RNA sequence: GGGAACGACUCGAGUAGAGUCGAAAAUCGACCGGGCGGACUGAAGCCCAAGUCCGACCCCGAGUUCGAGGAGGCCUCGGGUCACGUCCACCGGACCCACCGCAGAGUAGGCCAGACCCCGGGUCAGCUACGCCUGACGCUUCGGCGUCAGGCGUAGAAAAGAAACAACAACAACAAC
Reactivity to 2A3 in 0.01 (KOAc 150mM, MgCl2 10mM, bicine 150mM(pH8.5), 24C), signal-to-noise 1, nucleotides 027 to 126: u000c000g000a000c020c010g030g000g020c030g000g060a010c020u000g030a090a010g070c000c000c000a000a000g000u000c130c000g050a300c050c020c000c140g100a120g080u090u120c000g080a030g030g010a010g010g010c010c020u000c020g050g020g040u070c090a150c180g020u030c070c010a040c180c130g010g000a040c000c030c010a070c060c040g070c010a060g030a010g240u170a030g040g060c000c000a000g080a010c050c000c000c050g060g000g000u090c030a030g040